This 177-nucleotide RNA was probed chemically with DMS and 2A3. Values are in units of 0.01, from 0 to 300, in steps of 10. Source: RMDB library OK2TRN, as collected in RNAgym. For DMS the reverse transcriptase was MarathonRT. The reactions ran in a buffer of 150 mM KOAc, 10 mM MgCl2 and 150 mM bicine (pH 8.5), at 24 C. 2A3 adducts were read by reverse transcription with SuperScript II with manganese.

RNA sequence: GGGAACGACUCGAGUAGAGUCGAAAACUGUCGGCAUUAAAGUAGGCCGUGACAUUCUGUCCUUGCUGAAGAGAAGUCGCUUCAUUUACCGGCACUGUGGCGCACAGUGUUUGCCCGUCGGGUAGCGCAUCUCCUUUUAGUUCGCUAAAAGGAGAUGAAAAGAAACAACAACAACAAC
Reactivity to DMS in 0.01 (KOAc 150mM, MgCl2 10mM, bicine 150mM(pH8.5), 24C), signal-to-noise 8, nucleotides 027 to 126: c070u010g010u010c030g010g010c040a080u000u010a070a070a140g010u000a120g020g010c040c080g010u010g010a050c060a110u000u010c100u000g000u000c000c040u000u010g020c090u010g000a110a090g010a100g000a070a060g010u000c030g020c030u000u010c050a100u000u000u010a080c070c030g000g000c020a040c040u000g010u000g010g010c100g010c040a150c030a020g000u000g010u000u000u000g000c030c010c020g010u000c080g010g000g020u000a040g020c110g010
Reactivity to 2A3 in 0.01 (KOAc 150mM, MgCl2 10mM, bicine 150mM(pH8.5), 24C), signal-to-noise 8, nucleotides 027 to 126: c040u040g080u120c010g020g010c040a060u080u200a180a110a080g060u080a090g100g000c020c030g030u050g030a020c030a090u130u100c060u130g060u020c010c010u060u130g030c050u070g030a100a040g040a010g020a170a020g050u050c030g000c050u040u040c030a090u070u070u110a070c030c000g010g010c010a000c020u040g020u100g160g070c120g010c100a010c010a030g020u010g040u090u080u110g040c010c000c010g060u090c040g040g020g030u040a020g030c050g000